The record gives the reactivity of an RNA of 207 nucleotides to 2A3. Source: RMDB library OK3TST, as collected in RNAgym. Values cover nucleotides 27 to 156. The reactions ran in a buffer of 150 mM KOAc, 10 mM MgCl2 and 150 mM bicine (pH 8.5), at 24 C. For 2A3, 420 sequencing reads were counted. For 2A3 the reverse transcriptase was SuperScript II with manganese.

[RMDB]
RNA sequence: GGGAACGACUCGAGUAGAGUCGAAAACACAGGCCCGGUGCUGGAAAACCAAACUGGAUGAAUAAAGAUGAUAAUCUAAAGAGGACCAAAUGCCACUUAUCGGCGUAUGGGGCCGAGAGCAUUUAAGAGGCACCCCAGACUCCCCAGUAGACCAAUAACGAUACAGACGAUUCGUCGUCUGUAUCGUAAAAGAAACAACAACAACAAC
Reactivity to 2A3 in 0.01 (KOAc 150mM, MgCl2 10mM, bicine 150mM(pH8.5), 24C), signal-to-noise 1, nucleotides 027 to 156: c050a000c060a080g060g040c000c000c000g000g000u030g010c000u000g090g050a050a060a060a150c000c020a040a040a000c080u010g020g020a020u030g050a170a150u110a200a050a030g090a000u100g000a090u090a200a000u110c040u060a170a000a020g130a160g000g040a000c010c040a030a000a000u040g000c000c000a060c070u130u040a070u120c030g030g030c010g000u030a120u130g040g000g000g050c000c040g000a010g000a000g010c010a030u030u030u270a010a080g030a060g040g000c010a010c000c000c000c000a000g030a120c070u090c020c020c010c010a010g050u140a000g120a000c040c000a070a070u130a040